[RMDB]
RNA sequence: GGGAACGACUCGAGUAGAGUCGAAAAGAAAGAAAACUACGUGAUGAUCAUUAUGAAUUUGCAAUCCUGACAACCACCUAUCACAUGUGAGGUUGUAUGUUGACUCUUCUACACUUGAUCUGACCAACUCUUUGGAAGCAUUCGUGCUUCCAAAGAGAAAAGAAACAACAACAACAAC
Reactivity to DMS in 0.01 (KOAc 150mM, MgCl2 10mM, bicine 150mM(pH8.5), 24C), signal-to-noise 2, nucleotides 027 to 126: g000a030a060a150g020a080a060a150a060c060u000a090c080g000u000g000a060u010g000a010u010c020a030u000u010a100u000g010a040a060u000u000u020g000c070a030a050u010c040c050u030g000a040c060a050a040c040c020a080c080c000u000a100u010c030a040c230a030u000g010u060g000a040g070g020u000u040g020u000a030u000g000u000u000g000a070c080u000c070u030u000c010u010a110c050a130c100u000u000g000a010u000c030u000g000a140c210c070a050a190
Reactivity to 2A3 in 0.01 (KOAc 150mM, MgCl2 10mM, bicine 150mM(pH8.5), 24C), signal-to-noise 7, nucleotides 027 to 126: g060a040a090a010g110a020a100a020a020c120u150a070c090g060u040g030a060u050g010a010u030c030a010u040u150a100u240g100a080a060u070u030u090g010c010a020a060u080c030c060u070g040a030c010a010a020c000c020a050c020c020u130a070u160c080a080c060a170u130g090u090g090a120g040g040u000u000g030u030a200u040g030u040u040g030a150c010u020c030u080u000c010u050a040c060a040c110u010u020g010a010u000c010u040g010a020c030c000a030a060
Source: RMDB libraries RFM100 and RFMREP, as collected in RNAgym.
Structure probing data (DMS and 2A3) for a 177-nucleotide construct.
2A3 adducts were read by reverse transcription with SuperScript II with manganese.